Description:
Source: RMDB library OK3TST, as collected in RNAgym. An RNA of 207 nucleotides, treated with DMS and 2A3 and read out base by base.
RNA sequence: GGGAACGACUCGAGUAGAGUCGAAAAGAUCAUGGUACUCGCCCUACGACGGAGCCACCUGGACGCAAGCCAGCGAUGUGGAUAUCGACCAUGUUGUCCCCCUCGCCAACGCCUGGAGAGUAAGUAACCCUACCCUCCAAUGAUAGUAAUAGUAUCCUAUUCUGUGUAGUUUCGACUACACAGAAUAAAAAGAAACAACAACAACAAC
Reactivity to DMS in 0.01 (KOAc 150mM, MgCl2 10mM, bicine 150mM(pH8.5), 24C), signal-to-noise 3, nucleotides 027 to 156: g000a080u010c030a070u000g010g030u000a060c050u000c010g020c030c020c040u000a070c050g030a050c050g010g020a090g030c000c030a070c060c030u000g050g010a070c050g000c140a090a090g020c020c040a090g010c050g010a080u010g030u010g020g000a130u000a110u010c060g010a110c000c020a080u000g010u000u000g010u010c030c000c010c030c020u000c010g020c030c040a060a080c070g000c050c050u010g010g020a060g000a030g000u000a010a110g020u020a110a220c120c010c030u000a050c000c010c000u010c000c010a040a090u000g000a100u000a060g010u000a070a080u000a100g000u000a080u000c030c130
Reactivity to 2A3 in 0.01 (KOAc 150mM, MgCl2 10mM, bicine 150mM(pH8.5), 24C), signal-to-noise 3, nucleotides 027 to 156: g050a040u050c010a040u050g020g020u070a100c030u030c080g030c030c030c010u070a080c060g100a020c050g000g050a020g060c000c010a030c010c030u040g010g010a040c030g030c100a030a050g060c010c010a000g040c020g090a060u060g030u030g020g020a040u020a050u170c040g020a030c050c000a040u070g090u090u050g100u190c010c010c000c000c010u020c010g020c030c020a050a020c060g020c000c020u010g000g000a020g000a000g030u040a070a080g010u040a060a070c010c020c010u020a020c020c000c000u020c010c000a000a020u060g050a040u060a030g060u070a060a040u080a060g100u150a090u190c060c000

Conditions: 150 mM KOAc, 10 mM MgCl2 and 150 mM bicine (pH 8.5), 24 C. For 2A3 the reverse transcriptase was SuperScript II with manganese.